[RMDB]
RNA sequence: GGGAACGACUCGAGUAGAGUCGAAAAGCUUAUAGAGCCAAGAUUAUUCACCAUCUACUUGGGCCAGUGUGCAGCCAUCAAUUGGGCAUUUGAUGUACAUUAUCAUAGACCAUCAGGGAAAUAUCAGCCGAGUAUAUGAAUUCGUUCAUAUACUCGGAAAAGAAACAACAACAACAAC
Reactivity to 2A3 in 0.01 (KOAc 150mM, MgCl2 10mM, bicine 150mM(pH8.5), 24C), signal-to-noise 9, nucleotides 027 to 126: g010c020u150u100a100u120a290g120a040g040c020c030a060a040g050a160u070u110a060u150u140c040a070c080c010a050u020c020u080a080c020u030u060g030g020g000c000c020a060g010u030g030u040g050c030a020g030c020c010a050u070c030a070a170u150u100g020g030g020c030a050u060u070u130g070a080u040g020u060a030c040a100u040u130a050u170c050a040u050a080g070a090c020c000a040u070c040a050g050g030g100a040a110a030u210a040u110c030a010g020
Reactivity to DMS in 0.01 (KOAc 150mM, MgCl2 10mM, bicine 150mM(pH8.5), 24C), signal-to-noise 6, nucleotides 027 to 126: g000c040u000u010a110u020a080g020a070g000c030c080a080a080g000a110u030u020a080u020u010c060a090c080c040a150u010c020u010a060c050u000u010g010g000g000c030c050a080g030u000g000u010g020c040a060g020c080c040a050u040c110a040a080u030u020g000g010g000c080a110u010u010u010g000a050u000g010u000a080c150a060u040u020a030u020c060a070u000a060g000a100c040c010a030u020c070a070g020g000g010a050a050a060u020a070u030c090a100g020